The record gives the reactivity of an RNA of 177 nucleotides to DMS and 2A3. Reactivities are given for positions 27 through 126.

RNA sequence: GGGAACGACUCGAGUAGAGUCGAAAAAGCUCAGAUAGUUCAGGACCUGAAAUGAAAUGAAUUGAUACUGCUUAAACUCAAACUGGGAGUGACAUUUAUUUUCUUUACCAAUGAGGGUUUGAUUGAACCUUGAAUCGAGAUUCGUCUCGAUUCAAGGAAAAGAAACAACAACAACAAC
Reactivity to DMS in 0.01 (KOAc 150mM, MgCl2 10mM, bicine 150mM(pH8.5), 24C), signal-to-noise 2, nucleotides 027 to 126: a080g000c030u000c040a110g010a120u000a050g010u000u000c050a070g010g010a140c040c020u000g000a080a070a080u020g000a010a090a070u000g020a040a020u010u000g010a120u000a030c100u000g000c050u000u000a030a110a060c070u020c110a040a120a100c150u020g020g010g000a030g000u000g000a080c170a060u000u010u000a070u020u000u000u010c030u000u000u000a120c080c050a020a070u000g000a300g010g010g000u000u000u000g000a090u010u000g020a060a090
Reactivity to 2A3 in 0.01 (KOAc 150mM, MgCl2 10mM, bicine 150mM(pH8.5), 24C), signal-to-noise 2, nucleotides 027 to 126: a010g020c030u030c050a020g040a200u150a050g090u050u020c050a030g030g080a040c010c010u060g060a070a050a050u060g070a040a030a070u020g000a000a100u030u020g060a020u060a200c010u030g160c030u040u070a170a020a000c040u070c070a090a150a100c040u050g000g020g070a010g030u020g000a020c000a030u040u130u120a110u060u080u020u000c000u030u110u040a090c000c030a070a090u130g020a060g000g000g000u020u010u070g110a070u130u190g030a010a010